RNA sequence: GGGAACGACUCGAGUAGAGUCGAAAAGCGCGUGAGGGCGGUGACGAUUAUUUCUUGUAAAACAAAAUGAGGUCGUUGGCGGAGUGAAAAGGCUCACCGUCGUUUUGUUGAGAAACGCUCUGUGCGGCGAGGCAAAUACUUUCGAGUAUUUGCCUCGAAAAGAAACAACAACAACAAC
Reactivity to DMS in 0.01 (KOAc 150mM, MgCl2 10mM, bicine 150mM(pH8.5), 24C), signal-to-noise 1, nucleotides 027 to 126: g040c060g010c030g050u000g000a050g010g010g000c040g010g000u010g000a120c170g000a250u000u000a180u000u000u000c040u000u000g020u000a150a070a020a080c010a040a020a030a030u000g000a060g010g010u000c120g040u020u020g010g030c030g000g000a070g030u010g000a070a050a120a050g000g000c050u000c050a130c010c010g000u000c000g010u010u000u000u000g010u000u000g020a030g010a040a010a080c020g000c000u000c030u000g000u000g000c030g000g000